Structure probing data (DMS and 2A3) for a 177-nucleotide construct. Conditions: 150 mM KOAc, 10 mM MgCl2 and 150 mM bicine (pH 8.5), 24 C. 2A3 adducts were read by reverse transcription with SuperScript II with manganese. The DMS profile rests on 9,803 reads. As a SHAPE reagent, 2A3 marks flexible, mostly unpaired nucleotides at the ribose 2'-OH. For DMS the reverse transcriptase was MarathonRT. Source: RMDB library TTRDEL, as collected in RNAgym.
RNA sequence: GGGAACGACUCGAGUAGAGUCGAAAAGAUAUGGAGCGGUAGGGAGUGUAUAAUUGAAACACUCGGAAACGAGUAACACGAGGAUCUACCCGCUCCUAAGUCAAAGAAGUCGGUUCGCCGACUUCAAUCUAUUUACAUAGUUCGCUAUGUAAAUAGAAAAAGAAACAACAACAACAAC
Reactivity to DMS in 0.01 (KOAc 150mM, MgCl2 10mM, bicine 150mM(pH8.5), 24C), signal-to-noise 7, nucleotides 027 to 126: g000a030u000a300u000g010g000a010g030c020g010g010u000a010g010g010g010a030g020u000g000u000a100u010a100a190u020u010g010a120a130a140c230a040c010u000c010g000g000a090a070a140c010g010a020g000u010a110a030c020a010c000g010a090g020g000a040u010c010u000a010c100c030c060g010c010u010c000c000u000a010a060g000u000c040a100a110a150g000a010a010g010u000c000g010g010u000u000c200g010c010c000g010a020c000u000u000c000a040a080
Reactivity to 2A3 in 0.01 (KOAc 150mM, MgCl2 10mM, bicine 150mM(pH8.5), 24C), signal-to-noise 6, nucleotides 027 to 126: g010a000u050a040u120g010g000a000g010c000g000g000u010a010g020g030g010a060g050u010g040u030a130u050a280a290u150u220g190a170a100a040c090a020c060u010c000g000g010a030a050a010c010g000a010g020u040a040a000c000a000c020g090a300g060g030a010u000c000u010a020c030c030c000g000c000u010c000c000u000a020a010g010u010c030a070a010a260g010a000a000g000u010c010g030g060u050u100c270g060c110c010g010a000c000u000u000c000a000a000